This 207-nucleotide RNA was probed chemically with 2A3. Reactivities are given for positions 27 through 156. The reactions ran in a buffer of 150 mM KOAc, 10 mM MgCl2 and 150 mM bicine (pH 8.5), at 24 C.

RNA sequence: GGGAACGACUCGAGUAGAGUCGAAAACUUCGACUCGGACCGGCUCAUCUCGACAAGAGGCGGCAGUCCUCAGUACUCUUACUCUUUUCUGUAAAGAGGAGACUGCUGGACCCGCCGCCCAAGUUCGAGCAUGGGCCCAGUUCCGAGCGAAGGGAUCGUACUAUGUUGACUUCGGUCAACAUAGUACAAAAGAAACAACAACAACAAC
Reactivity to 2A3 in 0.01 (KOAc 150mM, MgCl2 10mM, bicine 150mM(pH8.5), 24C), signal-to-noise 2, nucleotides 027 to 156: c010u000u000c010g230a230c000u010c000g020g020a010c020c020g010g010c010u020c000a000u000c000u000c000g010a000c020a080a070g110a150g070g000c010g000g000c000a010g010u000c000c000u010c000a040g000u180a300c000u010c020u090u150a240c010u040c000u080u130u120u090c150u280g270u300a000a080a000g000a000g000g010a000g000a000c000u000g050c040u020g000g000a000c000c050c160g000c000c000g000c000c010c000a020a010g010u080u040c000g010a000g000c040a000u000g000g000g000c000c000c000a000g000u060u000c000c000g000a000g000c000g010a000a000g010g000g010a040u130c080
The data come from the RNA Mapping Database (RMDB), library VIROID.